[RMDB]
RNA sequence: GGGAACGACUCGAGUAGAGUCGAAAAAGGGUGUUACUCACAUACGAUAGGUAGAGGCAAGGAUGCUGCACAGAAUCCUGCAAGGCACAGGAUGCCACCCAGCCCCUGACAGAGACUCCUCCGGGCCGGUACAUGCCAUAUUCGUAUGGCAUGUACCAAAAGAAACAACAACAACAAC
Reactivity to DMS in 0.01 (KOAc 150mM, MgCl2 10mM, bicine 150mM(pH8.5), 24C), signal-to-noise 3, nucleotides 027 to 126: a080g000g030g000u000g000u010u000a090c060u030c070a080c060a130u000a120c170g000a070u010a070g030g020u020a060g000a070g030g010c050a090a040g000g010a050u000g000c000u000g010c070a090c100a080g000a080a040u000c010c010u000g000c060a080a130g000g010c070a080c050a070g010g010a270u000g000c060c000a060c060c060c020a090g000c000c010c010c060u010g000a060c170a080g010a190g000a050c070u000c030c030u000c010c050g020g000g030c160c070
Reactivity to 2A3 in 0.01 (KOAc 150mM, MgCl2 10mM, bicine 150mM(pH8.5), 24C), signal-to-noise 2, nucleotides 027 to 126: a000g060g030g020u060g000u050u080a100c040u050c040a040c020a100u160a070c060g180a120u130a180g040g030u020a020g020a030g040g000c010a020a040g040g000a020u080g020c060u070g030c080a020c000a110g110a040a020u030c000c000u010g030c080a080a100g100g000c040a010c000a040g060g070a020u040g070c020c000a010c010c000c010a020g020c030c020c000c010u010g010a040c020a050g140a000g020a110c020u050c000c000u000c000c040g040g020g000c000c040